The record gives the reactivity of an RNA of 177 nucleotides to 2A3 and DMS. As a SHAPE reagent, 2A3 marks flexible, mostly unpaired nucleotides at the ribose 2'-OH. Source: RMDB library OK2TRN, as collected in RNAgym.
[RMDB]
RNA sequence: GGGAACGACUCGAGUAGAGUCGAAAAUGUGCUGGAGAUGGUGUACAGUAGGGUGAGGAAACCAAAUUCUCAGUUGGCACUGGUGUACCCUUGUACAGGUGAUGUAAUAUCUCUGUGCCUCAGUUUGAUCCGCCCGAUUAUUCGUAAUCGGGCGGAUAAAAGAAACAACAACAACAAC
Reactivity to 2A3 in 0.01 (KOAc 150mM, MgCl2 10mM, bicine 150mM(pH8.5), 24C), signal-to-noise 1, nucleotides 027 to 126: u080g020u000g000c000u070g050g010a070g250a040u060g020g010u100g010u110a070c000a120g150u000a070g030g070g140u080g070a050g010g010a030a070a000c070c010a000a010a210u170u020c050u000c020a110g100u100u110g070g000c020a000c050u070g000g000u080g020u070a010c000c000c060u000u100g070u010a040c040a020g100g100u140g090a040u010g120u250a100a120u070a070u180c020u000c000u030g000u020g040c000c020u000c010a070g000u040u100u150g000
Reactivity to DMS in 0.01 (KOAc 150mM, MgCl2 10mM, bicine 150mM(pH8.5), 24C), signal-to-noise 1, nucleotides 027 to 126: u010g020u000g000c020u000g000g000a090g130a010u000g010g050u010g080u000a090c090a050g000u020a050g010g000g010u000g000a120g000g020a070a120a150c100c100a040a060a170u010u000c040u000c030a130g000u010u000g020g000c070a080c060u000g050g000u000g000u000a050c010c020c010u000u030g020u020a000c020a030g000g040u010g000a050u000g020u000a110a080u010a070u010c020u000c000u000g000u000g000c010c110u000c090a070g020u000u010u010g000
The RNA was probed in 150 mM KOAc, 10 mM MgCl2 and 150 mM bicine (pH 8.5) at 24 C. DMS adducts were read by reverse transcription with MarathonRT. Values cover nucleotides 27 to 126.